[RMDB]
Structure probing data (DMS and 2A3) for a 177-nucleotide construct.
RNA sequence: GGGAACGACUCGAGUAGAGUCGAAAAAGAUUUGCUUUCUGUAGAGCAGCACUGCAUUUACUCCAAACAGCAGUAGGCUCUUCCUAACUCAGUGACUUUCAACAGUGCCUUCUUCUCUUGGAUAUGCAGAGUAAGACAACUUCGGUUGUCUUACUCUAAAAGAAACAACAACAACAAC
Reactivity to DMS in 0.01 (KOAc 150mM, MgCl2 10mM, bicine 150mM(pH8.5), 24C), signal-to-noise 3, nucleotides 027 to 126: a060g000a100u030u000u020g010c140u000u000u000c020u030g000u010a060g000a020g030c060a060g010c120a070c010u000g000c000a140u000u030u010a030c140u000c140c060a090a020a070c180a130g010c110a040g000u010a080g000g020c020u000c010u000u010c000c060u000a150a050c070u000c020a070g000u000g010a040c060u010u030u010c070a080a110c130a040g010u000g000c020c000u000u010c040u010u000c020u010c010u010u010g030g000a120u040a000u050g000c140
Reactivity to 2A3 in 0.01 (KOAc 150mM, MgCl2 10mM, bicine 150mM(pH8.5), 24C), signal-to-noise 6, nucleotides 027 to 126: a000g090a040u110u080u090g040c060u040u060u050c040u090g130u100a040g000a010g010c020a020g060c100a010c050u030g030c010a050u030u100u120a140c080u110c060c000a100a110a100c040a060g000c000a000g020u040a030g070g000c000u000c000u040u040c000c010u050a060a050c020u040c070a030g050u050g120a120c050u050u140u110c110a100a090c020a070g030u030g030c010c000u030u040c000u050u010c010u030c000u010u060g050g020a060u100a070u220g080c090
For 2A3 the reverse transcriptase was SuperScript II with manganese. DMS adducts were read by reverse transcription with MarathonRT. The reactions ran in a buffer of 150 mM KOAc, 10 mM MgCl2 and 150 mM bicine (pH 8.5), at 24 C. Source: RMDB library OK1LIB, as collected in RNAgym.